RNA sequence: GGGAACGACUCGAGUAGAGUCGAAAAGCAUAACUGUUCGCAGUUAUGCAAAACACGAAGCUGGAAACAGACGCAGUGAAACAAACUAAAGCGAAAACAAAAAAAGCCAACAGUUCGCUGUUGGCAACUCGUUUAAUCAGUUCGCUGAUUAAACGAGAAAAGAAACAACAACAACAAC
Reactivity to DMS in 0.01 (KOAc 150mM, MgCl2 10mM, bicine 150mM(pH8.5), 24C), signal-to-noise 2, nucleotides 027 to 126: g010c000a010u000a000a010c010u000g000u000u020c070g040c000a050g020u000u000a000u000g040c000a000a030a130a140c020a040c020g010a170a300g010c000u000g100g000a090a030a090c040a010g000a010c140g000c060a240g000u020g000a050a070a070c060a020a060a110c160u000a040a130a050g000c030g020a000a040a210a110c120a050a020a070a110a010a110a180g050c000c000a020a000c000a030g000u000u010c250g030c030u000g020u000u040g000g020c020a030a000
Reactivity to 2A3 in 0.01 (KOAc 150mM, MgCl2 10mM, bicine 150mM(pH8.5), 24C), signal-to-noise 2, nucleotides 027 to 126: g000c000a000u000a000a000c000u000g020u060u040c140g000c040a000g000u000u010a000u010g000c000a010a010a040a000c030a010c020g060a030a010g070c000u000g020g000a060a040a040c000a020g110a080c050g030c120a000g000u000g060a090a100a000c040a050a080a050c060u240a180a020a020g040c030g070a030a030a040a100c160a050a180a040a040a020a000a000g030c010c000a000a000c000a000g020u090u100c160g010c080u000g000u000u000g000g040c000a000a000
The record gives the reactivity of an RNA of 177 nucleotides to DMS and 2A3. DMS adducts were read by reverse transcription with MarathonRT. Reactivities are given for positions 27 through 126. For 2A3, 1,885 sequencing reads were counted. The RNA was probed in 150 mM KOAc, 10 mM MgCl2 and 150 mM bicine (pH 8.5) at 24 C.